[RMDB]
RNA sequence: GGGAACGACUCGAGUAGAGUCGAAAAGCCGUCCGAACCCGAUAGACCGUGCGGACGGCGCGAGAGCCACGGUCUAUCGGGUUGCUCUCGCACGACGGUGGACAUGCGAAAGCAUGUCCAUCGUCGAGCUGGAUCUACGCUUCGGCGUAGAUCCAGCAAAAGAAACAACAACAACAAC
Reactivity to 2A3 in 0.01 (KOAc 150mM, MgCl2 10mM, bicine 150mM(pH8.5), 24C), signal-to-noise 1, nucleotides 027 to 126: g000c000c000g040u040c010c040g090a040a030c010c000c000g000a000u010a000g000a020c020c040g020u080g050c080g110g060a090c040g090g010c010g010c060g100a180g030a020g070c070c020a010c020g000g000u000c000u000a010u020c010g000g000g010u010u030g000c010u010c000u030c020g030c030a090c040g000a000c000g000g000u000g000g000a000c000a000u000g000c000g110a210a000a010g000c000a000u000g000u000c000c000a000u000c000g000u000c000g000a000

Chemical mapping of a 177-nucleotide RNA with 2A3. 2A3 adducts were read by reverse transcription with SuperScript II with manganese. The reactions ran in a buffer of 150 mM KOAc, 10 mM MgCl2 and 150 mM bicine (pH 8.5), at 24 C. It was measured as part of the RMDB library OK1LIB.